This 177-nucleotide RNA was probed chemically with 2A3.
For 2A3 the reverse transcriptase was SuperScript II with manganese.
Reactivities are given for positions 27 through 126.
The reactions ran in a buffer of 150 mM KOAc, 10 mM MgCl2 and 150 mM bicine (pH 8.5), at 24 C.

RNA sequence: GGGAACGACUCGAGUAGAGUCGAAAAGAAAUUUGGUUCUAUGUUCUUAGUACUUGGGUUGAUAAAGACCACUCGUAGUGUGAGAAGCCUUUGUCAUCGCGGGUAUUAUGCAACAUAGCUCAAAAAAGUGACUUGCGAAGUUCGCUUCGCAAGUCACAAAAGAAACAACAACAACAAC
Reactivity to 2A3 in 0.01 (KOAc 150mM, MgCl2 10mM, bicine 150mM(pH8.5), 24C), signal-to-noise 2, nucleotides 027 to 126: g200a010a130a060u090u040u080g070g000u120u050c000u040a000u000g000u000u010c000u030u000a000g000u010a030c000u000u030g240g000g000u000u000g000a000u000a000a000a000g000a030c000c070a110c060u030c010g260u120a270g050u190g110u110g200a020g000a140a020g030c000c000u000u000u010g040u010c010a000u000c020g000c000g170g000g000u010a010u000u000a000u000g000c020a000a000c000a000u000a000g000c000u010c010a100a100a020a020a020a030